[RMDB]
Background:
The record gives the reactivity of an RNA of 177 nucleotides to DMS. Values cover nucleotides 27 to 126.
RNA sequence: GGGAACGACUCGAGUAGAGUCGAAAAGAUAUGGACGGCAUGACCGAGUAUGUUCCAGCGACGAUCGUACCAUCGGAAACGAUGGUUACGGGAGCUGAAACAUACUCGGUCAUGCCGUCCUAAGUCACAUAUACGUUCUGUUCGCAGAACGUAUAUGAAAAGAAACAACAACAACAAC
Reactivity to DMS in 0.01 (KOAc 150mM, MgCl2 10mM, bicine 150mM(pH8.5), 24C), signal-to-noise 2, nucleotides 027 to 126: g010a050u010a300u000g000g020a010c000g010g000c010a000u000g010a020c000c010g010a040g000u000a000u000g000u000u000c010c010a000g010c000g000a090c300g000a040u010c000g010u000a030c000c000a010u000c000g020g000a130a110a250c010g020a000u000g000g000u000u010a000c000g000g000g000a050g010c000u010g010a020a010a010c000a000u000a000c000u000c000g000g000u010c020a000u000g000c000c000g000u000c000c000u000a010a050g000u000c030a280